[RMDB]
RNA sequence: GGGAACGACUCGAGUAGAGUCGAAAAGAUAUGGACCUCGCCAGGGAGCGUGCAAAUCGGAAACGAUUUGAUACGCAUCGAUCUGGACGAGGUCCUAAGUCAAAAGGGCCAUCUUCGGAUGGCCCAACGGAAGCAUAUUCUUCGGAAUAUGCUUCCGAAAAGAAACAACAACAACAAC
Reactivity to DMS in 0.01 (KOAc 150mM, MgCl2 10mM, bicine 150mM(pH8.5), 24C), signal-to-noise 1, nucleotides 027 to 126: g000a010u000a300u010g000g020a020c020c000u000c000g040c000c000a010g010g000g010a030g010c000g050u000g030c000a040a000a010u010c000g030g030a090a040a120c000g020a010u000u000u000g010a060u010a000c000g020c000a300u000c170g000a070u030c000u000g030g010a190c020g000a020g000g030u000c020c000u000a000a100g000u000c010a130a020a130a110g000g050g030c000c000a000u000c000u000u040c260g040g020a010u000g000g020c020c000c010a000a010